[RMDB]
RNA sequence: GGGAACGACUCGAGUAGAGUCGAAAACGCUGGGAUUAUUGGGAGGCUAUGUGAGGGAGGCAGACUAUACUGAAGCGCGCACGGUAUAGUCUGCCAUCGAUCUCACAAGGCCUCCAGGAUCCUGUGCUGAAGCGCGCACGGCAACCGAAAGGUGCGAGAUAACGUUCAACUUCGGUUGAACGUUAUCAAAAGAAACAACAACAACAAC
Reactivity to 2A3 in 0.01 (KOAc 150mM, MgCl2 10mM, bicine 150mM(pH8.5), 24C), signal-to-noise 2, nucleotides 027 to 156: c040g050c030u120g010g000g010a010u030u110a190u240u290g270g090g010a030g000g000c010u050a110u180g000u000g000a000g010g020g000a020g000g000c000a000g000a000c000u000a000u000a000c000u020g030a220a110g050c000g000c000g000c040a010c030g030g000u000a000u000a000g010u000c000u000g010c030c000a040u110c010g010a000u000c000u000c000a000c000a000a040g030g020c000c000u000c000c000a000g000g000a000u000c000c000u040g130u120g080c040u100g030a080a010g000c010g000c010g060c010a010c000g080g030c010a080a160c010c000g020a070a010a030g030g000u040g000c040g000a160